[RMDB]
RNA sequence: GGGAACGACUCGAGUAGAGUCGAAAAAUUCAUUUAUUCAUUUAUGGAUUGAUUGAUUGAUUGAUUGAGACAGAGUCUCACUCUGUUGCCUAUGCUGGAGUGCAGUGGCGCAAUCUCAGCUCACUGCCGAGAAACUGGUAUUCGUACCAGUUUCUCGAAAAGAAACAACAACAACAAC
Reactivity to 2A3 in 0.01 (KOAc 150mM, MgCl2 10mM, bicine 150mM(pH8.5), 24C), signal-to-noise 2, nucleotides 027 to 126: a000u030u000c010a010u060u090u180a100u090u140c050a050u050u100u240a090u170g020g030a020u000u090g020a030u050u090g020a030u050u070g000a060u110u160g030a050u020u110g030a030g020a040c050a050g110a050g100u020c040u020c140a030c000u030c000u010g050u090u070g000c010c050u120a120u280g050c050u090g060g080a080g060u060g060c000a000g000u000g010g040c090g000c080a080a060u030c070u020c050a010g000c000u000c010a000c020u000g000c020
Reactivity to DMS in 0.01 (KOAc 150mM, MgCl2 10mM, bicine 150mM(pH8.5), 24C), signal-to-noise 3, nucleotides 027 to 126: a030u000u000c030a010u010u000u000a040u010u010c030a060u010u010u000a060u030g010g010a010u000u010g000a080u000u000g000a040u000u010g010a140u000u000g000a080u000u000g000a210g010a030c020a100g010a070g000u000c080u000c180a100c010u010c010u000g000u000u000g010c050c050u000a100u010g020c070u000g000g000a120g010u000g010c010a020g010u000g010g020c200g000c010a030a060u000c090u000c100a140g010c020u000c010a020c020u000g000c030
Chemical mapping of a 177-nucleotide RNA with 2A3 and DMS. Conditions: 150 mM KOAc, 10 mM MgCl2 and 150 mM bicine (pH 8.5), 24 C. The 2A3 profile rests on 1,427 reads.